Chemical mapping of a 177-nucleotide RNA with DMS and 2A3. 2A3 adducts were read by reverse transcription with SuperScript II with manganese. For DMS the reverse transcriptase was MarathonRT. It was measured as part of the RMDB libraries RFM100 and RFMREP. The RNA was probed in 150 mM KOAc, 10 mM MgCl2 and 150 mM bicine (pH 8.5) at 24 C.
RNA sequence: GGGAACGACUCGAGUAGAGUCGAAAACCAUUAUUUCAGACUUAAAAACAAGCAUGUUUUCAAAUGGCACUAUGAGCUGCCAAUGAUGUAUCACCACCAUAUCUCAUUAUUCUCCAGUAAAUGUGAUCCAACUGAUAAUAUUCGUAUUAUCAGUUGGAAAAGAAACAACAACAACAAC
Reactivity to DMS in 0.01 (KOAc 150mM, MgCl2 10mM, bicine 150mM(pH8.5), 24C), signal-to-noise 5, nucleotides 027 to 126: c010c010a120u030u040a070u030u010u010c090a090g030a100c080u010u000a030a070a060a130a070c070a080a090g010c100a050u000g010u000u000u000u000c080a050a050a080u020g000g020c030a050c040u010a090u010g000a090g010c140u010g020c010c010a020a100u010g010a080u000g010u000a050u000c040a050c030c010a060c010c020a030u000a080u000c030u000c030a080u000u010a100u000u000c020u000c020c100a120g020u000a050a060a080u030g010u000g010a170u000
Reactivity to 2A3 in 0.01 (KOAc 150mM, MgCl2 10mM, bicine 150mM(pH8.5), 24C), signal-to-noise 9, nucleotides 027 to 126: c000c000a020u090u100a150u040u170u100c070a040g060a090c040u110u140a050a060a040a060a050c050a060a030g070c060a100u090g050u050u060u040u070c070a110a130a100u070g010g000c010a010c040u080a140u280g080a040g040c080u010g000c010c000a020a020u060g020a020u040g040u070a060u090c010a010c070c000a010c010c010a030u020a050u070c020u000c020a010u000u080a040u150u020c030u020c020c030a020g040u130a050a130a140u130g030u070g050a020u010